Background: This 177-nucleotide RNA was probed chemically with DMS and 2A3. For DMS the reverse transcriptase was MarathonRT. For 2A3 the reverse transcriptase was SuperScript II with manganese.
[RMDB]
RNA sequence: GGGAACGACUCGAGUAGAGUCGAAAAGAUAUGGAGACCCAGCUUUUGACGCUGGAUAAACAUCGGAAACGAUGUGUAACAGCGAUAAGCUGCUCCUAAGUCAAAGCAUGACGUUCGCGUCAUGCAAGUAGCACAUAUCGUUCGCGAUAUGUGCUACAAAAGAAACAACAACAACAAC
Reactivity to DMS in 0.01 (KOAc 150mM, MgCl2 10mM, bicine 150mM(pH8.5), 24C), signal-to-noise 4, nucleotides 027 to 126: g000a030u000a300u010g020g010a040g000a300c160c290c030a010g010c000u000u000u010u010g020a200c080g010c010u000g000g010a060u000a050a120a000c000a000u000c000g020g000a090a100a190c000g010a010u000g020u000g010u000a140a190c010a010g020c000g020a070u000a000a040g020c010u000g000c050u000c000c000u000a040a160g000u000c010a060a130a120g000c000a010u000g010a000c000g010u000u010c190g010c000g010u010c000a000u000g010c000a000a030
Reactivity to 2A3 in 0.01 (KOAc 150mM, MgCl2 10mM, bicine 150mM(pH8.5), 24C), signal-to-noise 3, nucleotides 027 to 126: g020a040u070a060u150g020g010a020g010a050c050c120c040a000g000c020u080u070u080u200g150a090c040g010c010u000g020g010a000u010a010a000a000c000a010u010c010g000g020a030a030a040c010g000a010u000g010u010g000u010a040a000c000a000g000c010g000a010u010a030a010g000c010u000g020c000u000c000c020u040a240a030g070u080c060a090a030a040g020c000a010u010g000a010c000g020u050u110c300g020c010g110u020c000a000u000g000c000a010a010

The reactions ran in a buffer of 150 mM KOAc, 10 mM MgCl2 and 150 mM bicine (pH 8.5), at 24 C.